[RMDB]
RNA sequence: GGGAACGACUCGAGUAGAGUCGAAAAUUUGUGUCCAUGGUGUACAUGUCAAUGUUAAAGUGACAAGCAUUAGAGGUACUGUGGCUAUCACUUCUUUAAUAGGUCCUGUAGUGGGUGACGUUAUUGACUUAGAUUAUCGGUUCGCCGAUAAUCUAAGAAAAGAAACAACAACAACAAC
Reactivity to DMS in 0.01 (KOAc 150mM, MgCl2 10mM, bicine 150mM(pH8.5), 24C), signal-to-noise 6, nucleotides 027 to 126: u010u010u000g010u000g010u000c020c030a060u010g020g010u010g010u000a060c100a080u010g000u000c050a070a070u000g000u010u010a060a090a090g020u000g020a040c070a090a110g010c040a070u000u010a090g010a120g010g010u000a060c070u000g010u000g010g010c260u010a060u000c040a040c040u000u010c050u000u000u000a040a110u010a060g000g010u000c010c020u000g010u000a090g010u000g010g010g020u000g000a080c110g010u000u010a080u000u010g000a210
Reactivity to 2A3 in 0.01 (KOAc 150mM, MgCl2 10mM, bicine 150mM(pH8.5), 24C), signal-to-noise 2, nucleotides 027 to 126: u050u040u100g040u000g000u000c030c000a050u060g060g000u120g000u020a040c050a070u030g070u050c000a070a110u110g040u130u120a220a140a180g090u130g070a000c000a050a040g010c000a010u060u100a070g000a040g130g070u070a020c020u040g000u000g050g000c010u020a000u160c010a000c000u050u050c000u000u080u050a150a090u100a120g090g000u050c000c000u020g040u090a050g070u100g000g030g000u070g040a020c070g090u090u080a100u080u070g020a010